[RMDB]
RNA sequence: GGGAACGACUCGAGUAGAGUCGAAAAGAUCGGGGUCUGCAACUCGGCCCGGUGGAGUCGGAGGCGGUAGUAAUCGCAGAUCAGCAACGGUGCGGUGAAUACGUUCCAGGGCCUUGUACACACCGGCAAUUUAAUUAUUAUUCGUAAUAAUUAAAUUAAAAGAAACAACAACAACAAC
Reactivity to DMS in 0.01 (KOAc 150mM, MgCl2 10mM, bicine 150mM(pH8.5), 24C), signal-to-noise 7, nucleotides 027 to 126: g000a090u010c020g010g010g000g010u010c070u010g000c060a080a060c180u010c120g010g010c040c010c020g010g020u020g010g000a090g010u010c050g000g000a080g000g010c030g000g010u010a050g010u010a110a030u000c010g000c010a040g000a090u030c060a130g000c200a090a110c160g000g010u010g000c020g000g000u000g000a140a150u020a090c020g000u010u010c030c030a150g000g010g010c020c000u000u010g010u010a070c120a060c030a030c020c010g000g010c080
Reactivity to 2A3 in 0.01 (KOAc 150mM, MgCl2 10mM, bicine 150mM(pH8.5), 24C), signal-to-noise 5, nucleotides 027 to 126: g050a030u060c020g000g010g010g050u030c050u080g030c030a040a050c040u020c080g020g000c000c030c020g000g040u070g010g040a150g040u090c070g040g030a050g030g040c020g000g010u030a010g010u020a030a030u030c020g000c020a010g030a170u070c070a030g130c030a050a100c100g060g010u030g010c010g010g020u010g040a030a040u120a100c020g030u090u050c020c020a030g030g020g000c020c000u010u030g030u040a020c030a000c000a010c030c000g020g000c000

The data come from the RNA Mapping Database (RMDB), library OK1LIB. Chemical mapping of a 177-nucleotide RNA with DMS and 2A3. The RNA was probed in 150 mM KOAc, 10 mM MgCl2 and 150 mM bicine (pH 8.5) at 24 C.